[RMDB]
RNA sequence: GGGAACGACUCGAGUAGAGUCGAAAAGUGACGCCGCUCUGCGCUCAGCUUUACCAGUUUGUACCAUAGACACUGACGAAGGGACUGCUCUGCAGAAGCAUUGUGAAGCUGUUGAGUACGUACUGUACGAGCACAGAACGUUCGCGUUCUGUGCUCGAAAAGAAACAACAACAACAAC
Reactivity to DMS in 0.01 (KOAc 150mM, MgCl2 10mM, bicine 150mM(pH8.5), 24C), signal-to-noise 2, nucleotides 027 to 126: g000u000g030a120c130g010c090c030g100c110u000c040u000g000c060g000c030u000c090a080g000c040u000u000u000a090c090c030a070g010u030u000u010g010u000a070c010c040a060u000a140g000a080c070a070c060u010g000a080c090g040a060a110g000g000g020a170c050u000g000c000u000c020u010g000c010a050g000a030a180g010c030a080u010u030g000u000g010a100a110g020c040u000g000u000u000g020a060g010u000a020c160g000u000a050c100u020g010u000a080
Reactivity to 2A3 in 0.01 (KOAc 150mM, MgCl2 10mM, bicine 150mM(pH8.5), 24C), signal-to-noise 1, nucleotides 027 to 126: g040u020g010a010c050g000c040c030g060c040u000c070u090g000c040g000c000u020c070a060g010c020u040u110u050a110c080c010a060g010u050u120u130g020u070a030c010c000a080u040a090g040a020c050a040c090u070g020a020c070g020a130a100g060g000g000a010c000u010g070c010u070c130u180g000c020a020g050a010a000g020c020a040u080u180g060u070g140a090a030g060c050u010g040u110u080g020a020g000u000a050c060g000u020a100c020u060g060u090a040